RNA sequence: GGGAACGACUCGAGUAGAGUCGAAAAGAUAUGGAAGCAAUAGCUCCCUCGAUAAUAUCAACAGCUGGUCCCUCGGAAACGAGGGCCAGACAUGAUAGAAUCGAGGGAGCUAUUGCUUCCUAAGUCACAGAGUUAACAUCUUCGGAUGUUAACUCUGAAAAGAAACAACAACAACAAC
Reactivity to DMS in 0.01 (KOAc 150mM, MgCl2 10mM, bicine 150mM(pH8.5), 24C), signal-to-noise 1, nucleotides 027 to 126: g010a050u010a300u020g000g000a000a010g050c010a010a060u000a010g000c000u000c000c030c000u000c010g030a020u000a050a190u000a000u020c000a070a140c300a140g020c010u000g000g020u000c000c020c000u010c000g040g000a140a070a150c010g020a010g010g000g010c000c000a000g000a000c120a220u000g000a000u000a000g010a300a010u000c000g000a020g010g000g000a010g010c000u000a000u000u000g010c000u000u020c000c000u020a010a000g030u000c010a190